An RNA of 177 nucleotides, treated with DMS and 2A3 and read out base by base. The reactions ran in a buffer of 150 mM KOAc, 10 mM MgCl2 and 150 mM bicine (pH 8.5), at 24 C. Values cover nucleotides 27 to 126.
RNA sequence: GGGAACGACUCGAGUAGAGUCGAAAAGAUAUGGACCGUACUUUCGACGAUCGUACGGGAUCGGAAACGAUCUUACGGGAGAAAUGUACGGUCCUAAGUCAAACAGUUGUACUUCGGUACAACUGAAUCGUAAGAUUAGGUUCGCCUAAUCUUACGAAAAAGAAACAACAACAACAAC
Reactivity to DMS in 0.01 (KOAc 150mM, MgCl2 10mM, bicine 150mM(pH8.5), 24C), signal-to-noise 7, nucleotides 027 to 126: g000a000u000a030u010g000g000a010c010c000g010u000a000c000u000u000u000c000g020a120c300g000a020u000c010g010u000a020c300g010g010g010a000u000c000g020g000a010a010a030c000g010a010u000c000u000u000a010c010g000g010g000a020g000a010a030a010u000g020u000a010c000g000g010u000c000c000u000a000a080g000u000c010a170a130a300c010a010g000u000u000g010u000a000c000u000u020c220g030g010u000a000c000a000a010c000u000g010a030a060
Reactivity to 2A3 in 0.01 (KOAc 150mM, MgCl2 10mM, bicine 150mM(pH8.5), 24C), signal-to-noise 5, nucleotides 027 to 126: g010a000u010a000u040g000g000a000c010c010g010u010a010c020u030u030u040c100g300a300c020g000a190u010c010g000u030a040c170g130g020g000a010u000c000g010g000a010a010a010c010g000a010u000c020u040u030a000c000g010g010g010a040g010a020a030a030u290g000u000a000c000g010g000u010c000c000u000a000a000g000u000c000a000a010a080c000a010g010u000u000g000u000a000c010u070u120c300g170g000u010a000c000a000a000c010u000g000a030a190